[RMDB]
RNA sequence: GGGAACGACUCGAGUAGAGUCGAAAACUACUUGUGUGAGAAUACUUUUAGUACAAGCGAGUACACGCUGUAUACUGCCACUUGUGUGAGAAUACUUUUAGUACAAGCGAGUACACGCAGUAUACUGACGACGCUAACUAUUCGUAGUUAGCGUCGUAAAAGAAACAACAACAACAAC
Reactivity to DMS in 0.01 (KOAc 150mM, MgCl2 10mM, bicine 150mM(pH8.5), 24C), signal-to-noise 2, nucleotides 027 to 126: c060u000a040c140u000u010g000u040g000u000g000a120g000a130a050u060a060c030u020u030u020u020a050g000u000a010c020a150a140g000c030g000a140g010u030a020c070a060c020g040c070u000g020u000a030u010a020c010u000g000c040c130a130c010u020u000g000u030g000u030g010a160g000a130a040u000a030c070u000u040u020u000a060g020u000a000c070a000a140g000c030g000a070g000u010a040c070a150c300g000c020a030g000u000a060u000a000c010u000g000
Reactivity to 2A3 in 0.01 (KOAc 150mM, MgCl2 10mM, bicine 150mM(pH8.5), 24C), signal-to-noise 4, nucleotides 027 to 126: c000u110a030c010u090u080g000u060g010u080g050a120g090a140a060u140a190c000u080u110u070u130a050g010u010a010c050a150a050g020c060g050a010g060u040a000c100a010c010g000c020u000g010u000a010u000a020c010u060g020c000c030a030c010u050u040g020u010g000u050g110a110g080a090a110u170a150c040u000u190u220u300a050g010u030a010c050a080a040g000c030g020a020g050u070a050c000a010c060g000c000a000g020u000a000u010a000c000u010g020